[RMDB]
Chemical mapping of a 177-nucleotide RNA with DMS and 2A3.
RNA sequence: GGGAACGACUCGAGUAGAGUCGAAAAGAUAUGGACAGGCCAGGGAGCGUGUCGGAAACGACAUUGCAUCGAUCUGGCUGUCCUAAGUCAAAAUCCUGACACAUAGCUUCGGCUAUGUGUCAGGAAACAGGAUCUUAAAGUUCGCUUUAAGAUCCUGAAAAGAAACAACAACAACAAC
Reactivity to DMS in 0.01 (KOAc 150mM, MgCl2 10mM, bicine 150mM(pH8.5), 24C), signal-to-noise 4, nucleotides 027 to 126: g000a030u000a300u010g010g000a010c000a020g010g010c000c000a010g000g010g000a020g030c020g020u000g010u000c000g000g010a080a080a180c000g000a010c000a010u000u010g030c000a300u000c160g000a020u020c000u000g010g000c000u000g000u000c000c000u000a010a070g000u000c050a090a060a110a110u000c000c000u010g000a020c000a000c000a000u000a010g000c000u000u010c200g010g020c000u000a000u000g000u010g000u000c000a010g000g000a000a020a080
Reactivity to 2A3 in 0.01 (KOAc 150mM, MgCl2 10mM, bicine 150mM(pH8.5), 24C), signal-to-noise 5, nucleotides 027 to 126: g020a010u050a030u140g000g000a010c020a010g140g300c000c010a000g000g000g020a020g000c010g000u010g000u010c000g010g070a080a100a040c010g010a010c010a040u150u300g000c010a150u300c020g000a040u020c000u000g000g000c000u010g000u000c000c000u000a060a020g050u010c030a000a010a040a270u020c000c000u010g010a000c000a000c000a000u020a010g010c020u080u060c300g090g000c000u010a000u010g000u000g000u000c000a010g000g000a000a000a000
Description
For DMS the reverse transcriptase was MarathonRT. Reactivities are given for positions 27 through 126. For 2A3 the reverse transcriptase was SuperScript II with manganese. It was measured as part of the RMDB library TTRDEL.